[RMDB]
RNA sequence: GGGAACGACUCGAGUAGAGUCGAAAAGAUAUGGACUGAGGGAGCUCAGGUUCGGAAACGAACCGGGAGCGAGGAUCUCACAUGUCCUAAGUCAAAAGCACCUACUUGGUUCGCCAAGUAGGUGCAACAGAGUGAGCUAGUUCGCUAGCUCACUCUGAAAAGAAACAACAACAACAAC
Reactivity to DMS in 0.01 (KOAc 150mM, MgCl2 10mM, bicine 150mM(pH8.5), 24C), signal-to-noise 2, nucleotides 027 to 126: g000a040u000a290u000g000g000a050c020u020g000a020g000g010g010a010g000c000u000c000a280g010g000u000u000c000g000g000a080a080a200c010g000a000a020c000c000g000g020g000a000g040c010g010a080g010g010a080u000c000u000c000a090c300a080u010g000u000c000c000u020a020a170g010u000c030a090a060a160a120g020c010a000c000c010u000a000c000u000u010g010g000u000u010c210g000c010c000a000a000g020u000a000g000g020u000g000c000a000a030
Reactivity to 2A3 in 0.01 (KOAc 150mM, MgCl2 10mM, bicine 150mM(pH8.5), 24C), signal-to-noise 1, nucleotides 027 to 126: g000a000u070a020u130g000g010a000c030u050g000a000g010g000g030a010g000c030u010c010a000g050g030u010u010c010g000g040a040a080a050c000g000a010a000c000c020g140g170g010a000g030c010g010a140g020g020a010u000c010u030c010a070c040a100u280g000u010c000c010u040a270a050g090u010c020a030a060a000a200g000c000a000c000c000u010a000c000u000u010g000g070u070u180c280g030c070c010a030a000g000u000a000g020g020u000g000c000a000a000
An RNA of 177 nucleotides, treated with DMS and 2A3 and read out base by base. For 2A3, 1,955 sequencing reads were counted. Source: RMDB library TTRDEL, as collected in RNAgym. 2A3 adducts were read by reverse transcription with SuperScript II with manganese. The RNA was probed in 150 mM KOAc, 10 mM MgCl2 and 150 mM bicine (pH 8.5) at 24 C. For DMS, 1,647 sequencing reads were counted. Values cover nucleotides 27 to 126.